An RNA of 207 nucleotides, treated with DMS and 2A3 and read out base by base. For DMS, 3,128 sequencing reads were counted. DMS adducts were read by reverse transcription with MarathonRT. The data come from the RNA Mapping Database (RMDB), library RNAMAK. Reactivities are rounded to 0.1 and cut off at 0 and 3. Values cover nucleotides 27 to 156.

RNA sequence: GGGAACGACUCGAGUAGAGUCGAAAACUGCCAUUCGUGGCAGGUAAAUCCUAAGUCACGUUGAGGACUUUGACAUGCAUCCGUUCGGAAACGAACGAGUGCAACAGCAAAGUCUCCCCACCAACGUGAUAUGGAGAAUGUGCCGUUUCGACGGCAAAACAUGCGUGGAUUUCGAUCCACGCAUGUUAAAAGAAACAACAACAACAAC
Reactivity to DMS in 0.01 (KOAc 150mM, MgCl2 10mM, bicine 150mM(pH8.5), 24C), signal-to-noise 3, nucleotides 027 to 156: c000u000g000c000c000a100u010u000c170g040u000g010g000c010a040g000g020u000a050a090a230u000c000c000u010a160a240g010u010c000a010c010g000u010u010g000a260g000g020a040c010u000u000u030g000a060c070a300u000g000c000a000u000c020c000g010u000u000c020g040g000a190a090a290c040g050a000a030c000g000a010g000u000g000c000a030a070c140a240g000c000a000a000a030g030u000c000u000c300c100c080c050a300c220c020a040a030c000g060u000g000a010u000a250u020g000g010a070g000a100a110u000g000u000g010c040c000g010u010u000u030c200g010a090c020g030g030c010a020a010
Reactivity to 2A3 in 0.01 (KOAc 150mM, MgCl2 10mM, bicine 150mM(pH8.5), 24C), signal-to-noise 4, nucleotides 027 to 156: c000u000g000c000c000a030u060u090c270g190u050g000g000c030a010g030g000u050a140a110a000u030c010c000u050a180a040g020u010c000a000c000g000u000u000g030a020g030g000a010c000u020u000u000g050a090c020a050u020g000c000a000u030c050c000g000u000u000c010g050g050a140a090a070c010g000a000a010c000g010a000g000u000g020c000a040a060c120a050g040c000a000a000a000g000u000c020u040c030c020c000c000a050c020c000a000a010c000g010u000g010a000u000a010u060g020g020a040g050a070a180u260g040u090g110c000c010g030u040u110u150c210g110a040c010g000g000c020a000a060